This 177-nucleotide RNA was probed chemically with 2A3 and DMS. Reactivities are given for positions 27 through 126.

[RMDB]
RNA sequence: GGGAACGACUCGAGUAGAGUCGAAAAACCAAUGCCGAAAGAUUAAGGCAAGGGGUUAGCCGCAAGGCGAAGCUCUAAACCCAAGUCCCGGUGAAUGUCGGCCGUAACUAUAACGGUCCUAAGGUAGCAUAUUAGCUAGAUUCGUCUAGCUAAUAUGAAAAGAAACAACAACAACAAC
Reactivity to 2A3 in 0.01 (KOAc 150mM, MgCl2 10mM, bicine 150mM(pH8.5), 24C), signal-to-noise 9, nucleotides 027 to 126: a000c030c010a050a060u130g000c010c000g070a110a100a040g060a050u110u130a100a040g020g000c020a040a090g020g010g000g010u280u020a010g000c000c010g010c070a030a030g000g000c010g000a010a000g000c000u000c000u020a090a110a060c000c010c010a020a010g020u010c030c030c000g030g000u050g050a160a160u160g080u120c060g000g000c000c000g010u020a050a040c050u070a080u050a300a010c000g000g020u040c000c030u080a100a030g090g020u020a030g060
Reactivity to DMS in 0.01 (KOAc 150mM, MgCl2 10mM, bicine 150mM(pH8.5), 24C), signal-to-noise 9, nucleotides 027 to 126: a090c020c010a120a130u020g000c000c000g000a090a100a080g010a050u010u010a210a130g000g010c020a040a300g010g000g000g010u000u000a300g010c000c010g000c300a100a140g010g010c000g000a090a140g000c010u000c010u000a030a250a160c030c010c030a080a130g000u000c000c100c000g000g010u000g000a120a050u010g000u010c150g010g000c000c000g010u010a100a090c190u020a120u020a080a040c020g000g000u000c000c070u010a050a100g010g010u010a080g010